Chemical mapping of a 177-nucleotide RNA with 2A3 and DMS.
For 2A3 the reverse transcriptase was SuperScript II with manganese.
The reactions ran in a buffer of 150 mM KOAc, 10 mM MgCl2 and 150 mM bicine (pH 8.5), at 24 C.
The 2A3 profile rests on 8,655 reads.
RNA sequence: GGGAACGACUCGAGUAGAGUCGAAAAAGAAGGAUCUUCUGUGAUUCAUGAAACCGUGCAUGAGAAUCGGCUAGGGUAUUUACGCGGUUUACAGCAAAUGGGAGCGAAUUGCGAGCUGUUCUACCAGUAACAUUCCUACUUUCGAGUAGGAAUGUUAAAAAGAAACAACAACAACAAC
Reactivity to 2A3 in 0.01 (KOAc 150mM, MgCl2 10mM, bicine 150mM(pH8.5), 24C), signal-to-noise 6, nucleotides 027 to 126: a000g110a030a030g040g010a040u030c020u150u040c050u130g120u110g050a080u060u060c040a050u140g040a050a020a010c020c010g010u040g000c050a080u110g040a040g090a210a060u080c030g070g000c080u110a090g080g010g040u090a090u050u110u040a040c030g000c010g040g000u020u020u060a090c050a010g040c030a080a090a100u110g050g010g010a050g010c030g040a080a070u060u070g020c010g010a020g010c020u010g020u040u000c030u070a120c010c020a030g030
Reactivity to DMS in 0.01 (KOAc 150mM, MgCl2 10mM, bicine 150mM(pH8.5), 24C), signal-to-noise 8, nucleotides 027 to 126: a060g010a110a070g010g000a090u010c030u000u000c090u000g020u010g010a100u000u000c040a070u010g010a100a060a070c040c020g010u000g000c050a060u010g000a130g010a090a070u000c060g020g010c070u000a080g010g010g020u000a050u010u010u000a070c080g020c030g010g010u000u000u010a080c100a080g000c080a030a070a070u000g010g000g010a070g010c040g000a080a100u010u010g010c040g000a060g010c020u010g010u000u000c050u000a110c060c060a140g000